[RMDB]
RNA sequence: GGGAACGACUCGAGUAGAGUCGAAAACUCUCAGUCCGCUUGACUUGAGCUAUCUGUCACCAAGGGCUCCAGGGAAAGGCAUGGCCUAUACCGUCAUAAACGGAACCCUGCAUUCGGCUCAUGCUAACAGUCCAGGGCCAUUCGUGGCCCUGGACUGAAAAGAAACAACAACAACAAC
Reactivity to 2A3 in 0.01 (KOAc 150mM, MgCl2 10mM, bicine 150mM(pH8.5), 24C), signal-to-noise 1, nucleotides 027 to 126: c000u040c000u010c000a010g040u040c010c020g150c150u130u160g020a010c000u040u040g050a040g080c000u000a110u290c000u090g180u200c110a070c100c010a030a180g010g000g000c000u000c000c020a000g100g000g080a000a000a000g000g000c140a250u070g010g000c000c000u010a010u050a010c000c000g000u120c050a170u230a160a280a000c050g000g090a090a140c070c170c000u000g000c050a120u060u110c040g000g000c010u040c210a000u000g000c100u000a000a020
This 177-nucleotide RNA was probed chemically with 2A3. For 2A3, 300 sequencing reads were counted. Conditions: 150 mM KOAc, 10 mM MgCl2 and 150 mM bicine (pH 8.5), 24 C. For 2A3 the reverse transcriptase was SuperScript II with manganese. The data come from the RNA Mapping Database (RMDB), library OK1LIB. Values cover nucleotides 27 to 126.